RNA sequence: GGGAACGACUCGAGUAGAGUCGAAAAGAUAUGGAUGCGAUAGGCUUCGAUGAUCUCGGAAACGAGAUUAGAAGCUAUUCGCAUCCUAAGUCAAACCAAACAGGGGUGUUCGCACCCCUGUUUGGAACAGUAGCGAAGUCUUCGGACUUCGCUACUGAAAAGAAACAACAACAACAAC
Reactivity to DMS in 0.01 (KOAc 150mM, MgCl2 10mM, bicine 150mM(pH8.5), 24C), signal-to-noise 1, nucleotides 027 to 126: g030a050u000a280u000g000g000a000u000g000c000g020a010u000a280g010g000c000u000u000c000g010a140u000g020a000u000c000u000c000g010g020a140a130a220c000g000a010g020a000u000u000a100g050a020a010g020c000u000a110u000u000c020g020c000a000u000c000c000u000a020a080g010u000c030a170a100a230c000c000a020a030a010c000a000g050g030g010g010u000g000u000u000c300g010c030a040c000c000c010c000u050g010u000u000u000g000g000a060a050
Record summary:
The record gives the reactivity of an RNA of 177 nucleotides to DMS. Source: RMDB library TTRDEL, as collected in RNAgym. The reactions ran in a buffer of 150 mM KOAc, 10 mM MgCl2 and 150 mM bicine (pH 8.5), at 24 C.